This 177-nucleotide RNA was probed chemically with DMS and 2A3.
RNA sequence: GGGAACGACUCGAGUAGAGUCGAAAAUAACUCGUCCCGCGAGAGCCGCUAAGGUGGAAACGCUAUGCGGUACUGCCUGAUAGGGUGCUUGCGAGUGCCGCGGGAGGUCUCGUAGAAAAUAACCUAACCUCUAAUAGCGGUUCGCCGCUAUUAGAGGAAAAGAAACAACAACAACAAC
Reactivity to DMS in 0.01 (KOAc 150mM, MgCl2 10mM, bicine 150mM(pH8.5), 24C), signal-to-noise 2, nucleotides 027 to 126: u020a090a160c070u000c040g000u000c010c000c010g030c010g010a010g000a300g040c000c000g010c040u000a090a090g040g000u010g000g010a180a100a090c010g040c000u000a300u000g010c000g000g010u010a050c000u000g020c000c010u000g000a110u020a220g030g010g030u000g010c010u000u000g030c000g020a060g020u010g020c000c010g000c010g000g000g000a080g000g000u000c010u000c000g010u000a130g000a100a110a030a070u000a080a090c070c030u020a070a190
Reactivity to 2A3 in 0.01 (KOAc 150mM, MgCl2 10mM, bicine 150mM(pH8.5), 24C), signal-to-noise 1, nucleotides 027 to 126: u110a020a030c040u010c080g040u010c000c000c000g000c000g000a010g010a010g030c010c030g000c050u130a170a090g030g000u030g030g020a030a120a010c000g000c020u020a040u120g020c000g000g020u020a020c010u020g000c010c000u060g020a040u030a030g040g020g000u020g000c010u050u100g010c000g020a000g010u000g000c000c000g020c030g020g000g000a010g010g090u010c010u000c010g030u040a040g160a020a170a020a030u140a020a000c030c080u070a060a090

For 2A3 the reverse transcriptase was SuperScript II with manganese.